Annotation: Conditions: 150 mM KOAc, 10 mM MgCl2 and 150 mM bicine (pH 8.5), 24 C. Chemical mapping of a 177-nucleotide RNA with DMS. It was measured as part of the RMDB library TTRINS.

RNA sequence: GGGAACGACUCGAGUAGAGUCGAAAAGAUAUGGAAGCCAACGGCCUCAUUCAGAGAGGGAGUCGUGUUCGGAAACGAACAUACGACGAAGAACUCUUCUGAAUGAGGCCGUUGGCUUCCUAAGUCACAAUAAGGUUGACUUCGGUCAACCUUAUUGAAAAGAAACAACAACAACAAC
Reactivity to DMS in 0.01 (KOAc 150mM, MgCl2 10mM, bicine 150mM(pH8.5), 24C), signal-to-noise 2, nucleotides 027 to 126: g000a080u000a300u010g010g000a040a020g010c010c000a000a040c000g000g020c000c000u000c030a000u000u000c010a000g010a070g000a030g000g020g010a100g000u010c000g030u010g000u000u010c000g000g040a190a130a300c000g010a040a020c010a180u000a080c050g000a010c000g000a090a180g020a130a250c010u000c000u010u000c010u000g040a010a000u000g000a000g010g020c000c000g030u000u000g010g010c010u000u000c010c010u000a000a020g000u000c020a130